[RMDB]
RNA sequence: GGGAACGACUCGAGUAGAGUCGAAAAUCAUAUAAAGUCAAGCAUGACUUUCCAAUAGAGAAUGAGUUUUUCCGCAAUCUUGGCUUUACAACAGUCUUUGCACGUCUAAAGGACUAUAAGAACAUCAAAUCCAUCGCAUAUUCGUAUGCGAUGGAUUAAAAGAAACAACAACAACAAC
Reactivity to DMS in 0.01 (KOAc 150mM, MgCl2 10mM, bicine 150mM(pH8.5), 24C), signal-to-noise 3, nucleotides 027 to 126: u070c170a090u000a130u040a010a040a050g020u000c000a080a060g000c270a180u010g000a110c000u000u000u000c070c070a210a100u050a110g000a140g000a030a030u030g000a120g010u000u000u020u010u000c000c060g000c080a040a070u000c010u000u000g000g000c000u000u010u000a030c220a210a100c270a000g010u000c000u000u000u000g000c100a110c150g040u060c070u010a040a120a040g000g000a020c050u000a030u020a050a030g000a050a070c170a090u030c270a070
Reactivity to 2A3 in 0.01 (KOAc 150mM, MgCl2 10mM, bicine 150mM(pH8.5), 24C), signal-to-noise 4, nucleotides 027 to 126: u070c000a000u090a020u030a200a010a000g020u000c010a000a000g070c080a130u090g040a050c000u020u050u000c020c000a210a110u180a150g130a050g060a030a060u240g090a050g110u060u060u010u060u070c060c050g010c120a060a070u040c000u000u010g000g010c000u010u060u040a030c080a120a020c060a030g050u040c000u030u070u130g110c200a160c110g040u020c050u160a110a090a020g020g030a020c030u020a030u050a250a070g070a060a050c030a090u070c110a030
The record gives the reactivity of an RNA of 177 nucleotides to DMS and 2A3. Conditions: 150 mM KOAc, 10 mM MgCl2 and 150 mM bicine (pH 8.5), 24 C. The 2A3 profile rests on 2,697 reads.